[RMDB]
Overview
An RNA of 177 nucleotides, treated with DMS and read out base by base. Reactivities are given for positions 27 through 126. It was measured as part of the RMDB library M2PK90. The RNA was probed in 150 mM KOAc, 10 mM MgCl2 and 150 mM bicine (pH 8.5) at 24 C. For DMS the reverse transcriptase was MarathonRT.
RNA sequence: GGGAACGACUCGAGUAGAGUCGAAAAUACAAGAAGGGGGGACGGACAAGGCUAUGUUGGCCGGGCGACGGUUGUCCCGGUUUAAGCGUGUAGGCUGGUUUUCCAGGCAAAUCCGGAAGAAAAUGAACACGACAAGUACUUUCGAGUACUUGUCGUGAAAAGAAACAACAACAACAAC
Reactivity to DMS in 0.01 (KOAc 150mM, MgCl2 10mM, bicine 150mM(pH8.5), 24C), signal-to-noise 2, nucleotides 027 to 126: u000a080c060a080a050g000a130a130g020g000g000g000g020g000a050c000g000g000a000c070a070a120g010g020c030u000a040u010g020u010u000g000g000c000c000g010g000g030c300g010a050c140g010g020u020u020g000u020c020c000c010g020g020u010u000u000a030a080g000c020g000u000g010u000a140g010g030c010u000g020g000u000u000u000u000c000c040a150g000g000c070a020a050a140u030c000c000g020g010a080a110g010a080a040a080a040u020g020a050a190